The record gives the reactivity of an RNA of 177 nucleotides to DMS and 2A3. The RNA was probed in 150 mM KOAc, 10 mM MgCl2 and 150 mM bicine (pH 8.5) at 24 C. High 2A3 reactivity points to a flexible backbone, as in loops and unpaired stretches. Source: RMDB library RFM100, as collected in RNAgym. Reactivities are rounded to 0.1 and cut off at 0 and 3.
[RMDB]
RNA sequence: GGGAACGACUCGAGUAGAGUCGAAAAGAAAGAAAGAAAGUCGUAAGUCGCUGCCCUGCAAAUGCUGGCAGCGGCGAGCUUCGUAUACCCCGAAUGGGUUUGCGAGGUUUCACCAGAAAAAGGAAAAAACAGACAGGGUAUUCGUACCCUGUCUGUUAAAAGAAACAACAACAACAAC
Reactivity to DMS in 0.01 (KOAc 150mM, MgCl2 10mM, bicine 150mM(pH8.5), 24C), signal-to-noise 1, nucleotides 027 to 126: g000a040a000a100g000a120a110a110g000a100a140a020g000u000c030g010u000a100a080g060u000c000g020c030u000g010c050c010c190u000g050c020a130a070a030u050g070c030u020g000g010c000a030g030c000g000g000c000g010a040g040c000u000u000c000g000u010a020u000a000c000c010c000c150g000a160a110u090g030g000g000u000u000u000g040c060g000a000g000g000u020u010u020c010a230c010c060a140g010a000a050a070a160a110g050g040a010a050a120a110
Reactivity to 2A3 in 0.01 (KOAc 150mM, MgCl2 10mM, bicine 150mM(pH8.5), 24C), signal-to-noise 2, nucleotides 027 to 126: g080a010a090a020g040a010a050a000g090a060a130a000g160u050c040g030u240a100a100g000u000c010g030c020u000g000c000c000c100u020g030c010a110a110a300u300g030c020u110g010g000c000a000g010c010g000g000c000g000a000g000c000u000u010c000g010u000a020u080a030c000c010c000c040g070a150a090u300g020g000g000u000u040u050g000c000g000a000g000g000u030u160u000c070a110c020c000a010g200a040a060a070a000a000g040g030a000a090a050a020